[RMDB]
This 177-nucleotide RNA was probed chemically with 2A3 and DMS. Source: RMDB library 15KREP, as collected in RNAgym. 2A3 adducts were read by reverse transcription with SuperScript II with manganese. DMS adducts were read by reverse transcription with MarathonRT. Conditions: 150 mM KOAc, 10 mM MgCl2 and 150 mM bicine (pH 8.5), 24 C.
RNA sequence: GGGAACGACUCGAGUAGAGUCGAAAACCUUCCCCUUACGGACAAAAGCUGGUCCCGAUAGGGGCACCCACAAUAGGAUGGCAAAAGGGGACUCGGGUCCGUCGUUCCAUCCUUUUCUUACCUUUUGCAUACUCUACCUCUUCGGAGGUAGAGUAUGAAAAGAAACAACAACAACAAC
Reactivity to 2A3 in 0.01 (KOAc 150mM, MgCl2 10mM, bicine 150mM(pH8.5), 24C), signal-to-noise 2, nucleotides 027 to 126: c000c000u020u060c030c000c010c020u000u030a010c010g000g000a010c010a020a230a030a050g100c110u110g100g020u000c000c000c000g030a050u060a060g000g020g020g000c000a020c010c030c010a080c060a020a060u080a180g020g000a020u040g020g000c080a000a020a050a060g000g010g070g000a010c010u040c220g300g060g020u010c000c010g060u040c010g060u100u010c000c000a000u000c000c000u000u060u040u040c070u020u100a070c000c000u060u000u020u060g160
Reactivity to DMS in 0.01 (KOAc 150mM, MgCl2 10mM, bicine 150mM(pH8.5), 24C), signal-to-noise 2, nucleotides 027 to 126: c030c030u010u020c000c000c000c010u000u000a300c300g000g030a020c010a050a050a070a150g010c260u020g000g000u000c000c000c020g000a200u010a050g020g000g010g020c140a000c020c020c020a120c250a060a050u000a020g010g000a040u000g010g020c210a020a050a070a090g030g020g010g010a020c000u020c280g000g000g000u000c030c010g000u010c050g000u000u000c000c010a030u000c000c000u000u000u000u000c090u010u010a150c180c020u000u000u000u000g010